[RMDB]
RNA sequence: GGGAACGACUCGAGUAGAGUCGAAAACUGUAGAUGAAUCGCGACAUCCAUGUUAUGCCGGCAGCGCUCACAGAUGCGGGAGUCCAGUCUUGAGCUCUGUUCCAUAGAUUUCUAAGCGGACGGAAUAGUUCCAUAGUGUACACACUCUGACCAGUCACGUCCAGGUUACAUUCGUGUAACCUGGACGAAAAGAAACAACAACAACAAC
Reactivity to 2A3 in 0.01 (KOAc 150mM, MgCl2 10mM, bicine 150mM(pH8.5), 24C), signal-to-noise 1, nucleotides 027 to 156: c030u060g030u090a020g010a080u140g040a110a160u090c040g000c010g150a020c010a050u030c040c030a080u050g000u080u170a010u110g010c040c010g060g010c030a000g020c010g020c000u000c000a100c080a060g070a050u080g090c070g080g000g070a060g140u080c030c000a050g020u000c020u000u010g000a000g000c010u000c000u050g020u040u000c030c000a000u010a050g000a000u090u110u000c040u050a100a030g040c030g060g020a010c010g000g100a050a020u110a030g040u140u010c010c010a030u130a040g070u080g080u100a050c090a000c000a000c120u040c010u040g070a040c000c000a020g100u130c110a000
Structure probing data (2A3) for a 207-nucleotide construct. For 2A3 the reverse transcriptase was SuperScript II with manganese. The reactions ran in a buffer of 150 mM KOAc, 10 mM MgCl2 and 150 mM bicine (pH 8.5), at 24 C. The data come from the RNA Mapping Database (RMDB), library OK3TST.